[RMDB]
RNA sequence: GGGAACGACUCGAGUAGAGUCGAAAAAGUCUACUUUUCGAAGUAGACUGUGCUCCCACUUGAUCGAGGUCUCACCGUGUCAUUGGCCACGACACUCGGGCGUAAUAGAUUGGUUCGCCAAUCUAAAAGAUACCGUCAGUUUCGACUGACGGUAUCUAAAAGAAACAACAACAACAAC
Reactivity to DMS in 0.01 (KOAc 150mM, MgCl2 10mM, bicine 150mM(pH8.5), 24C), signal-to-noise 3, nucleotides 027 to 126: a000g000u000c000u000a000c000u000u000u000u000c190g010a020a010g010u000a000g000a010c000u000g000u000g010c170u000c010c010c020a130c180u020u000g000a070u000c060g000a050g020g000u020c020u000c190a090c070c050g030u010g010u000c070a100u000u000g010g000c060c060a090c150g010a050c080a040c030u000c050g020g010g000c060g020u000a090a120u000a020g000a000u000u000g000g000u010u020c270g020c010c000a010a000u000c000u000a010a060a110
Reactivity to 2A3 in 0.01 (KOAc 150mM, MgCl2 10mM, bicine 150mM(pH8.5), 24C), signal-to-noise 2, nucleotides 027 to 126: a000g000u000c000u000a000c000u020u030u050u130c160g070a020a020g000u000a000g000a000c000u010g000u020g020c030u020c000c030c000a030c020u070u190g080a100u050c060g030a030g050g020u020c040u040c030a060c040c030g090u040g140u070c050a080u070u120g050g000c020c020a020c030g010a010c010a040c040u010c000g050g000g000c050g000u060a100a070u020a120g010a000u000u000g010g080u030u040c170g000c050c000a000a000u010c010u010a020a080a050